[RMDB]
RNA sequence: GGGAACGACUCGAGUAGAGUCGAAAAGUGAUACUGGAUAGCAGAUUGAGGUGUCACGGUCUCUGUUAUUUAGUAUCAGAACGCAGGUAGUAUUAGAUUGUGAUACCUCAAGUACUAUCAGCGUAUAGUAACUGGUAGUAUUCGUACUAUCAGUUACAAAAGAAACAACAACAACAAC
Reactivity to 2A3 in 0.01 (KOAc 150mM, MgCl2 10mM, bicine 150mM(pH8.5), 24C), signal-to-noise 9, nucleotides 027 to 126: g150u100g020a020u020a040c010u040g050g040a010u010a000g010c030a030g030a190u060u070g010a030g030g040u090g060u110c040a020c050g030g000u010c020u000c000u000g010u000u010a040u010u040u020a040g010u010a030u040c010a010g050a030a010c030g000c020a010g020g020u050a010g010u020a110u100u060a040g040a050u030u040g040u040g070a050u060a050c000c010u010c010a000a020g010u010a010c000u000a000u010c010a010g030c020g030u060a040u090a140
Reactivity to DMS in 0.01 (KOAc 150mM, MgCl2 10mM, bicine 150mM(pH8.5), 24C), signal-to-noise 9, nucleotides 027 to 126: g020u010g000a060u000a020c010u020g010g000a010u000a000g010c080a050g030a180u010u010g000a020g000g010u010g000u010c040a010c030g000g010u000c010u000c090u000g010u010u000a020u010u000u010a090g020u010a070u020c140a050g020a080a050c120g010c060a070g000g010u010a040g000u010a050u030u020a040g000a010u000u000g010u010g000a040u010a020c020c030u000c000a010a020g010u010a080c000u000a000u000c010a080g010c110g000u000a030u010a090

An RNA of 177 nucleotides, treated with 2A3 and DMS and read out base by base. Values cover nucleotides 27 to 126. The DMS profile rests on 58,347 reads. For 2A3 the reverse transcriptase was SuperScript II with manganese. It was measured as part of the RMDB library OK1LIB.